This 177-nucleotide RNA was probed chemically with 2A3 and DMS.
The reactions ran in a buffer of 150 mM KOAc, 10 mM MgCl2 and 150 mM bicine (pH 8.5), at 24 C.
2A3 adducts were read by reverse transcription with SuperScript II with manganese.

RNA sequence: GGGAACGACUCGAGUAGAGUCGAAAAGAAGAGAAGCGCGCGAAUUGGAAACCAGCGAACCUUAUUACGCGCGCAAGGAACCGGGCCUUGGUUCCUUGGAAAGAAUAGAUAAUGUCGCUGGUAAAGAACUAGGCUACUGGUUCGCCAGUAGCCUAGUAAAAGAAACAACAACAACAAC
Reactivity to 2A3 in 0.01 (KOAc 150mM, MgCl2 10mM, bicine 150mM(pH8.5), 24C), signal-to-noise 2, nucleotides 027 to 126: g090a090a010g050a000g020a090a070g050c000g010c000g030c010g000a030a050u090u040g100g000a060a120a070c000c000a000g030c000g000a040a090c000c010u050u020a020u000u060a210c050g000c000g000c000g000c020a000a000g000g000a000a010c010c010g110g110g110c000c030u200u140g030g010u000u000c040c000u000u020g020g090a100a090a000g090a120a070u200a080g160a140u120a100a090u260g000u060c000g000c020u000g000g000u030a000a070a000g010a030
Reactivity to DMS in 0.01 (KOAc 150mM, MgCl2 10mM, bicine 150mM(pH8.5), 24C), signal-to-noise 1, nucleotides 027 to 126: g010a160a180g000a140g000a100a100g000c020g030c010g010c010g030a120a190u050u000g000g020a230a180a100c000c000a000g030c000g040a020a140c070c070u000u000a080u000u010a140c010g140c020g000c050g000c000a000a010g030g000a000a000c000c000g000g010g010c120c080u030u070g000g000u000u000c000c030u000u010g000g020a110a080a080g000a090a060u030a170g000a080u060a080a040u000g000u010c000g030c010u030g020g000u000a080a040a060g050a040